[RMDB]
RNA sequence: GGGAACGACUCGAGUAGAGUCGAAAAGUUAGAGUCGUUCGCGACUCUAACAAAAAAGCGUACUACUCUUCGAGGAACUACCUCAGGCUCCCAAAUAGGAGCCGAGGCCGAUGAGAAGAGUAUCGCAAAAACAACUACACGUUCGCGUGUAGUUGAACUAUCUACAUUGGUUCGCCAAUGUAGAUAGAAAAGAAACAACAACAACAAC
Reactivity to DMS in 0.01 (KOAc 150mM, MgCl2 10mM, bicine 150mM(pH8.5), 24C), signal-to-noise 2, nucleotides 027 to 156: g020u000u010a010g010a030g000u010c020g040u000u010c220g020c000g050a050c020u000c010u000a000a020c030a010a050a050a110a100a140g010c020g030u020a060c070u000a020c010u000c000u000u000c010g000a300g010g020a140a110c020u000a050c000c000u000c000a090g100g000c000u000c010c010c030a050a130a190u000a080g010g020a030g040c000c000g000a020g040g020c000c080g000a190u000g000a300g040a040a050g010a050g020u010a020u000c040g010c040a020a050a110a100a190c010a000a010c000u020a010c000a010c000g020u000u000c300g050c030g000u000g020u000a010g030u010u000g010a060a140
Reactivity to 2A3 in 0.01 (KOAc 150mM, MgCl2 10mM, bicine 150mM(pH8.5), 24C), signal-to-noise 3, nucleotides 027 to 156: g010u000u000a010g000a000g000u000c010g020u040u090c150g020c020g080a000c000u000c010u000a010a000c000a010a060a000a000a010a030g030c060g030u110a090c050u000a000c000u020c000u000u020c010g040a110g080g010a110a050c080u100a060c260c000u000c030a070g000g010c000u010c030c040c000a150a210a010u240a110g010g000a000g010c000c010g010a000g000g000c010c010g190a250u150g060a030g000a090a000g010a000g000u000a020u100c010g000c000a000a010a020a030a160c000a000a000c000u010a000c000a010c000g050u070u040c300g020c000g120u010g000u000a000g000u010u000g000a010a010